An RNA of 177 nucleotides, treated with DMS and 2A3 and read out base by base. The 2A3 profile rests on 13,712 reads. DMS adducts were read by reverse transcription with MarathonRT. It was measured as part of the RMDB library TTRDEL.
[RMDB]
RNA sequence: GGGAACGACUCGAGUAGAGUCGAAAAGAUAUGGAUGUUUGGGAGUCGCAUAUCGGAAACGAUAUACGACAUCGAUCAUGCAUCCUAAGUCAAAACCGCAUACCGCAGUUCGCUGCGGUAUGCGGAACAUAUGGCAUAACUUCGGUUAUGCCAUAUGAAAAGAAACAACAACAACAAC
Reactivity to DMS in 0.01 (KOAc 150mM, MgCl2 10mM, bicine 150mM(pH8.5), 24C), signal-to-noise 4, nucleotides 027 to 126: g000a010u000a030u020g000g010a010u000g000u000u000u000g010g000g000a020g030u000c000g000c030a000u000a000u000c000g020g000a020a010a020c000g010a020u000a000u000a020c000g010a010c000a160u000c160g010a100u000c000a000u000g000c000a010u000c000c000u010a000a080g000u010c010a100a080a090a180c000c000g010c000a010u000a010c000c000g010c000a010g010u000u010c240g020c010u000g010c000g000g010u000a000u000g000c020g010g000a020a030
Reactivity to 2A3 in 0.01 (KOAc 150mM, MgCl2 10mM, bicine 150mM(pH8.5), 24C), signal-to-noise 3, nucleotides 027 to 126: g010a010u020a010u060g000g000a010u000g040u000u040u010g020g010g000a050g010u000c000g000c010a010u000a000u010c010g000g000a000a010a000c010g000a000u010a000u020a030c000g100a000c010a040u300c040g000a010u010c010a000u020g010c010a000u020c010c000u000a000a000g010u010c030a030a020a080a170c000c000g000c010a000u000a000c020c010g000c010a010g030u060u140c250g110c210u010g010c000g020g000u000a000u000g010c000g010g010a000a010